[RMDB]
RNA sequence: GGGAACGACUCGAGUAGAGUCGAAAAGGUUCUUACUGGGCAAAGGACAGCAGUGCUCAAGAGCAUUUGAUUCUGUAUUUCUCUUCUGGCAACCUGAUCUGCUUUUAACAAAGGCCAUUUGCUAUGCUCCGAAGAGAACAUUCGUGUUCUCUUCGGAAAAAGAAACAACAACAACAAC
Reactivity to 2A3 in 0.01 (KOAc 150mM, MgCl2 10mM, bicine 150mM(pH8.5), 24C), signal-to-noise 2, nucleotides 027 to 126: g000g000u070u000c010u020u060a100c110u060g040g030g020c130a140a080a050g090g020a040c000a000g000c010a010g050u030g020c000u050c100a080a090g070a010g060c050a050u120u050u090g160a170u200u000c040u070g080u050a080u010u090u010c020u020c000u160u020c040u050g000g000c020a020a050c010c010u010g000a130u010c020u040g030c040u010u070u010u120a060a030c080a020a030a040g040g000c010c010a100u030u040u070g010c020u010a020u150g040c040
Reactivity to DMS in 0.01 (KOAc 150mM, MgCl2 10mM, bicine 150mM(pH8.5), 24C), signal-to-noise 3, nucleotides 027 to 126: g000g020u000u010c020u000u000a080c110u000g010g000g020c090a060a100a100g000g000a080c050a070g000c070a070g020u010g010c030u000c200a060a070g000a060g020c050a050u000u010u000g020a100u000u010c040u010g000u000a060u000u000u000c020u000c020u000u000c110u000g010g000c080a060a070c100c060u000g010a050u010c030u000g000c050u000u000u000u000a070a120c140a040a080a130g000g010c010c150a060u000u000u000g010c060u010a080u000g020c150